[RMDB]
RNA sequence: GGGAACGACUCGAGUAGAGUCGAAAAACACUAUAAGUGGCUAUGAAAAUUCGACUUUUGAUAAGGAUGUUUACUGUGGUAAGUCCAUGAGAUGCAGAAUGUGUUUGUUUGGUUAUCAAGAAUUGAGUGACUUGGAACAUACUAGUGUAAUAUGGAAAAUGGUACUGGAUUUCGAUCCAGUACCAUUAAAAGAAACAACAACAACAAC
Reactivity to 2A3 in 0.01 (KOAc 150mM, MgCl2 10mM, bicine 150mM(pH8.5), 24C), signal-to-noise 3, nucleotides 027 to 156: a000c050a010c000u060a070u030a300a090g040u040g030g010c030u010a050u180g080a010a030a100a060u050u090c080g020a020c030u020u120u100u130g050a050u110a100a040g040g020a060u070g020u050u060u050a060c040u060g010u020g030g030u050a050a060g020u000c020c010a030u070g030a060g010a100u110g020c040a030g020a120a060u030g040u000g000u100u040u010g050u030u040u070g030g010u020u040a020u050c010a000a020g060a090a180u130u030g040a050g020u030g040a040c030u010u030g010g030a020a000c010a010u070a040c030u020a060g010u010g030u070a110a080u160a090u170g070g010a060a300
Reactivity to DMS in 0.01 (KOAc 150mM, MgCl2 10mM, bicine 150mM(pH8.5), 24C), signal-to-noise 2, nucleotides 027 to 156: a100c060a110c030u010a140u010a170a110g020u000g000g020c030u000a080u000g000a060a100a080a180u020u000c020g010a120c030u010u000u000u010g010a100u000a090a140g020g000a020u010g030u000u000u000a040c040u000g030u010g020g050u000a040a100g020u000c000c050a070u000g020a080g010a080u010g010c040a050g020a040a170u010g020u010g020u010u000u000g000u000u000u000g030g000u000u000a060u010c020a050a100g010a070a130u010u010g010a080g050u000g000a100c060u010u010g010g000a060a090c080a070u000a030c060u000a080g010u010g000u000a040a140u000a070u000g010g010a020a080

This 207-nucleotide RNA was probed chemically with 2A3 and DMS. It was measured as part of the RMDB library OK3TST.